[RMDB]
RNA sequence: GGGAACGACUCGAGUAGAGUCGAAAAUCAGUGCGGAAGUGGUUUUCUCAACUCCAAUCAAAAAGGCAGAAAAAGUAAAGCAACGCGAUUUUCGCGCUGUUUUUUCGCUGCAUGCAAUGCUGCUUUCGUCCUCCUCAGUAUUCGUACUGAGGAGGACAAAAGAAACAACAACAACAAC
Reactivity to 2A3 in 0.01 (KOAc 150mM, MgCl2 10mM, bicine 150mM(pH8.5), 24C), signal-to-noise 5, nucleotides 027 to 126: u090c020a010g030u020g030c030g030g030a070a040g070u060g050g050u060u030u080u060c070u000c010a020a050c020u000c010c030a030a050u060c040a030a030a040a030a040g100g010c080a020g100a050a110a050a020a010g150u190a030a030a000g030c010a000a020c010g000c010g020a030u030u040u150u260c000g000c000g010c000u010g030u000u000u010u000u010u040c070g000c030u010g040c020a020u100g040c040a040a080u080g010c020u000g020c000u040u030u040c040
Reactivity to DMS in 0.01 (KOAc 150mM, MgCl2 10mM, bicine 150mM(pH8.5), 24C), signal-to-noise 2, nucleotides 027 to 126: u010c070a090g030u010g000c110g000g000a080a080g000u000g000g030u000u010u020u030c040u000c090a030a060c080u020c050c040a090a080u070c170a080a040a080a120a050g020g000c030a040g000a020a060a060a080a100g000u020a020a040a070g000c000a030a020c040g000c020g000a200u000u000u000u000c020g020c000g000c000u000g000u000u000u000u000u020u000c070g020c040u000g010c070a020u010g020c170a060a080u040g010c070u010g000c050u000u000u000c060

The data come from the RNA Mapping Database (RMDB), libraries RFM100 and RFMREP. This 177-nucleotide RNA was probed chemically with 2A3 and DMS. Reactivities are given for positions 27 through 126. 2A3 adducts were read by reverse transcription with SuperScript II with manganese. The RNA was probed in 150 mM KOAc, 10 mM MgCl2 and 150 mM bicine (pH 8.5) at 24 C.